[RMDB]
Source: RMDB library OK1LIB, as collected in RNAgym. The record gives the reactivity of an RNA of 177 nucleotides to DMS and 2A3. For 2A3, 566 sequencing reads were counted.
RNA sequence: GGGAACGACUCGAGUAGAGUCGAAAACUGCUGUGUGACAUAGGUGAGUCAUCAUCUAGUCCUGAAGUGGAAGAGACACGAACACUCAGAGUGCUCUCUAUGGUGGGGGACUGGCUUGAAAAAAGACCCCACCCUAGACGUUCGCGUCUAGGGUGGGAAAAGAAACAACAACAACAAC
Reactivity to DMS in 0.01 (KOAc 150mM, MgCl2 10mM, bicine 150mM(pH8.5), 24C), signal-to-noise 1, nucleotides 027 to 126: c000u020g000c050u010g000u010g000u020g000a010c050a120u000a020g020g060u000g010a030g000u040c300a080u000c020a000u020c020u000a000g010u010c000c000u070g010a090a070g010u000g000g000a110a050g000a100g010a040c050a030c030g000a030a040c130a020c040u030c040a100g000a080g050u000g020c120u000c030u000c010u020a030u000g010g000u010g000g010g020g010g040a100c140u000g000g000c130u000u080g000a000a050a150a080a000a000g070a230c050
Reactivity to 2A3 in 0.01 (KOAc 150mM, MgCl2 10mM, bicine 150mM(pH8.5), 24C), signal-to-noise 2, nucleotides 027 to 126: c000u010g030c000u020g010u050g050u030g110a000c000a250u060a000g080g070u000g010a030g150u120c030a090u000c000a000u010c130u000a000g010u000c000c050u030g050a170a010g010u000g070g110a060a000g080a090g030a040c000a000c060g120a080a030c010a060c120u140c020a010g030a000g030u130g000c030u000c000u000c030u050a070u220g060g000u010g020g000g000g010g070a060c020u010g100g070c030u050u060g110a090a090a000a000a000a010g050a030c000